Source: RMDB library TTRDEL, as collected in RNAgym. The record gives the reactivity of an RNA of 177 nucleotides to DMS.
RNA sequence: GGGAACGACUCGAGUAGAGUCGAAAAGAUAUGGACCCGGUAGACAUGCAGGUCGGAAACGACCCUGCAACAGCUACAGGGUCCUAAGUCAAAGUAAUUCUAGCUGCUUCGGCAGCUAGAAUUACAACUUUGUCAAUAGCUUCGGCUAUUGACAAAGAAAAGAAACAACAACAACAAC
Reactivity to DMS in 0.01 (KOAc 150mM, MgCl2 10mM, bicine 150mM(pH8.5), 24C), signal-to-noise 1, nucleotides 027 to 126: g030a010u000a300u000g030g010a010c010c000c010g010g000u000a000g030a040c060a240u000g000c000a020g000g000u010c000g020g020a040a110a170c020g000a000c070c110c050u000g000c020a040a030c260a130g000c010u000a000c000a030g000g010g050u010c000c020u000a000a050g000u000c020a140a140a180g000u000a020a020u000u000c000u000a000g000c010u000g000c000u000u010c230g020g000c000a000g020c000u000a000g000a010a000u000u000a000c000a050a110
The RNA was probed in 150 mM KOAc, 10 mM MgCl2 and 150 mM bicine (pH 8.5) at 24 C. Values cover nucleotides 27 to 126.